An RNA of 177 nucleotides, treated with DMS and read out base by base. High DMS reactivity at an A or C suggests that its Watson-Crick edge is free.
RNA sequence: GGGAACGACUCGAGUAGAGUCGAAAAUUGUUCGUGUGGAUACGACGGUGCCGGCGCUGUUGACGUUUAACUUGUUACACUUCAUCAGAACUUAGGGUGUCCGUUCGCUCGGCAUGAAGAUGCAGUGAAUAUCCCCUAGCUUCGGCUAGGGGAUAUUAAAAGAAACAACAACAACAAC
Reactivity to DMS in 0.01 (KOAc 150mM, MgCl2 10mM, bicine 150mM(pH8.5), 24C), signal-to-noise 1, nucleotides 027 to 126: u000u000g000u000u000c020g020u010g040u010g010g000a070u000a080c060g010a060c030g010g000u000g000c010c010g000g020c300g000c000u000g010u010u000g010a030c050g000u000u000u010a030a040c110u000u000g020u000u000a040c050a030c020u000u000c010a030u010c030a050g000a050a070c090u020u010a160g030g020g040u000g000u010c020c010g000u000u020c030g020c300u000c010g010g010c040a020u000g010a040a050g000a060u010g020c110a060g020u010g010